Chemical mapping of a 177-nucleotide RNA with DMS and 2A3. It was measured as part of the RMDB libraries RFM100 and RFMREP. Conditions: 150 mM KOAc, 10 mM MgCl2 and 150 mM bicine (pH 8.5), 24 C. The 2A3 profile rests on 604 reads.
RNA sequence: GGGAACGACUCGAGUAGAGUCGAAAAAGAUCGAGCGUACGCGCUCGAUCAAUUAAAUGAUGUUUUUAGUGUGUAAUCUCUCUCAUUAGAUCCUCGGAUCUAUGUAGAAAAUUUAUCCUUACUGAAAUACCUUAGCUAUCUUCGGAUAGCUAAGGUAAAAAGAAACAACAACAACAAC
Reactivity to DMS in 0.01 (KOAc 150mM, MgCl2 10mM, bicine 150mM(pH8.5), 24C), signal-to-noise 2, nucleotides 027 to 126: a180g000a000u000c000g010a000g000c000g020u050a080c180g020c000g030c010u000c000g010a000u000c000a020a040u000u030a030a090a120u010g000a090u000g000u010u000u000u000u030a010g020u000g060u020g040u000a020a040u000c090u020c080u010c000u010c030a020u000u020a000g000a000u000c010c020u030c300g020g010a000u000c000u000a020u010g000u030a020g000a000a020a090a040u000u000u000a060u020c050c060u000u040a070c080u010g000a070a060a070
Reactivity to 2A3 in 0.01 (KOAc 150mM, MgCl2 10mM, bicine 150mM(pH8.5), 24C), signal-to-noise 2, nucleotides 027 to 126: a010g010a000u000c050g010a000g040c030g000u040a050c250g030c010g000c150u000c010g000a000u000c000a000a000u000u020a000a000a070u190g080a040u010g120u060u030u050u030u060a120g040u210g080u050g020u090a060a170u020c030u000c000u000c000u000c070a020u060u060a000g000a000u000c000c180u060c300g050g000a000u000c000u000a000u030g010u080a010g050a010a010a010a000u140u090u070a030u050c010c030u110u030a020c110u030g020a010a060a000